Structure probing data (DMS and 2A3) for a 177-nucleotide construct. For 2A3 the reverse transcriptase was SuperScript II with manganese. It was measured as part of the RMDB library OK1LIB. For 2A3, 2,203 sequencing reads were counted. The reactions ran in a buffer of 150 mM KOAc, 10 mM MgCl2 and 150 mM bicine (pH 8.5), at 24 C.
[RMDB]
RNA sequence: GGGAACGACUCGAGUAGAGUCGAAAAUACUCUGAUUUGCUAUCAUCGACAUCUAUCUGGAGAUCAUAUGAUGAUGAUCUGAGACAUAGAGACGCCAGUCCCCUCAUUGUGCUCAGAUCCAGUAGGGCCACCCAUUUCUGUUCGCAGAAAUGGGUGGAAAAGAAACAACAACAACAAC
Reactivity to DMS in 0.01 (KOAc 150mM, MgCl2 10mM, bicine 150mM(pH8.5), 24C), signal-to-noise 2, nucleotides 027 to 126: u030a090c090u020c050u070g010a030u000u000u000g040c040u000a010u000c070a030u030c040g000a170c290a000u070c030u000a060u020c110u000g040g030a020g010a070u000c120a080u060a120u010g080a080u070g000a060u040g000a060u060c010u060g000a040g000a070c010a000u020a230g060a030g050a220c240g020c040c060a100g010u000c030c020c000c000u050c010a300u000u010g000u010g000c000u000c060a000g000a020u030c000c060a100g010u000a050g000g000g070
Reactivity to 2A3 in 0.01 (KOAc 150mM, MgCl2 10mM, bicine 150mM(pH8.5), 24C), signal-to-noise 4, nucleotides 027 to 126: u100a010c010u000c030u100g050a140u080u160u210g050c090u080a020u060c040a000u010c010g050a030c040a080u010c020u050a060u030c020u110g110g040a050g040a080u000c010a030u080a080u230g100a040u030g050a020u050g000a000u020c000u000g000a020g000a020c020a020u120a080g050a010g030a030c070g100c100c020a030g070u140c040c010c010c010u000c000a130u000u100g030u140g040c000u000c000a010g020a020u020c010c000a070g040u110a060g050g020g040